Source: RMDB library OK2TST, as collected in RNAgym. Chemical mapping of a 177-nucleotide RNA with 2A3 and DMS. The reactions ran in a buffer of 150 mM KOAc, 10 mM MgCl2 and 150 mM bicine (pH 8.5), at 24 C. For DMS the reverse transcriptase was MarathonRT.
[RMDB]
RNA sequence: GGGAACGACUCGAGUAGAGUCGAAAACAUAAGGUAGGGUAAAUAUUAUUAUUCCCAUUUGCUGAGUGAGAUAUGAGGGAUAAAGACUAAAUGACUUAGCCUGAACUGGAUGGCCUCUUAAUGGUAAGUUGGCAUAAUAAUUCGUUAUUAUGCCAACAAAAGAAACAACAACAACAAC
Reactivity to 2A3 in 0.01 (KOAc 150mM, MgCl2 10mM, bicine 150mM(pH8.5), 24C), signal-to-noise 4, nucleotides 027 to 126: c020a020u120a020a050g030g010u030a030g030g020g020u070a050a090a080u130a050u150u050a060u050u040a030u110u050c010c000c010a010u080u060u090g010c030u030g040a120g070u090g080a050g030a040u080a040u120g050a080g010g010g010a010u070a040a110a000g030a010c040u070a120a080a080u090g060a030c030u030u040a010g020c000c000u020g020a080a050c010u030g010g060a040u060g000g040c000c010u030c020u040u130a140a030u130g060g030u060a090a090
Reactivity to DMS in 0.01 (KOAc 150mM, MgCl2 10mM, bicine 150mM(pH8.5), 24C), signal-to-noise 6, nucleotides 027 to 126: c080a050u020a090a080g010g020u010a110g020g010g000u010a070a070a100u010a050u000u010a090u000u000a150u010u000c010c000c000a130u010u010u000g010c050u010g000a100g020u000g010a090g010a060u000a030u000g010a100g000g010g010a050u000a040a060a080g010a070c070u000a020a050a120u010g010a090c110u000u000a090g010c010c020u000g010a060a100c110u000g000g000a070u000g000g000c030c030u000c100u000u010a040a060u010g010g000u010a050a130